RNA sequence: GGGAACGACUCGAGUAGAGUCGAAAAUAUUACUGUGUCACCACUAAGGCUAAGUCCGUUCAACAAGAUCUUGACGUUAUUUUGCCUGGUGAGUUUUCCAAGAAGCAGUUAGGACUGCUCCAACCUACGCGUAUGUCGUUCGCGACAUACAAAAGAAACAACAACAACAAC
Reactivity to 2A3 in 0.01 (KOAc 150mM, MgCl2 10mM, bicine 150mM(pH8.5), 24C), signal-to-noise 9, nucleotides 027 to 129: u210a050u130u110a110c080u090g040u050g050u160c030a010c020c000a010c030u080a160a060g000g000c010u020a000a000g010u010c030c010g060u140u110c020a030a040c040a150a070g040a200u070c020u030u040g010a000c000g040u100u120a050u030u030u020u040g000c000c000u000g000g000u020g010a100g020u030u030u050u000c020c000a070a030g050a060a010g010c010a000g000u040u070a050g020g080a100c010u020g020c040u040c030c010a030a040c000c010u050a040c070g030c040
Reactivity to DMS in 0.01 (KOAc 150mM, MgCl2 10mM, bicine 150mM(pH8.5), 24C), signal-to-noise 9, nucleotides 027 to 129: u050a090u010u010a060c060u040g000u040g010u030c060a090c040c010a040c070u050a110a040g020g000c010u030a060a020g000u040c290c030g000u050u050c020a020a010c150a130a130g020a090u040c060u000u000g000a060c030g030u000u000a040u000u010u010u010g010c010c000u000g000g000u000g010a070g010u020u010u020u020c030c060a090a110g000a090a060g020c020a010g040u020u030a070g000g000a150c000u000g030c000u000c060c060a060a070c040c020u030a040c130g030c150